This 207-nucleotide RNA was probed chemically with DMS and 2A3.
RNA sequence: GGGAACGACUCGAGUAGAGUCGAAAAUUGCUAAUGUGUAUUGUGGAUCUCUAGACAUUUUGGGGAAACAUUACUACUUCUCUUCCCUUCCCCAUAGUAAAUAGUGUUUCACCAGUGUUUCACCCCACAGUAAAUAGUGUAACACCAUCGCCAAAACCUCUACUAUGAUUUUCGAAUCAUAGUAGAGAAAAGAAACAACAACAACAAC
Reactivity to DMS in 0.01 (KOAc 150mM, MgCl2 10mM, bicine 150mM(pH8.5), 24C), signal-to-noise 3, nucleotides 027 to 156: u010u010g000c010u000a160a110u000g020u010g020u010a040u000u010g050u010g010g010a100u000c060u010c040u010a100g020a060c040a060u000u010u010u010g000g000g010g000a030a020a030c010a020u000u000a030c020u000a040c030u000u000c040u000c100u020u000c030c020c030u010u000c000c000c010c120a120u000a080g000u000a060a080a100u000a010g040u000g020u000u000u000c010a010c010c010a070g030u000g000u000u000u020c090a060c050c110c020c020a050c020a070g010u000a030a050a070u000a050g010u000g020u010a100a080c060a080c030c020a050u000c060g010c040c040a030a070a100a150c190
Reactivity to 2A3 in 0.01 (KOAc 150mM, MgCl2 10mM, bicine 150mM(pH8.5), 24C), signal-to-noise 5, nucleotides 027 to 156: u150u100g000c020u080a090a090u110g050u030g020u080a030u060u020g000u010g010g040a090u020c050u000c040u160a040g030a070c020a040u150u180u120u130g000g000g000g000a020a010a030c030a020u050u080a020c050u010a020c010u130u100c080u030c000u140u150c030c020c000u020u010c040c020c010c030a050u060a010g050u070a010a060a120u060a020g010u010g010u010u010u000c020a030c010c020a010g010u000g010u030u070u060c030a030c010c000c000c000a020c010a010g020u060a010a030a050u070a050g030u070g030u070a030a020c010a020c020c020a060u110c050g070c060c010a040a080a060a060c000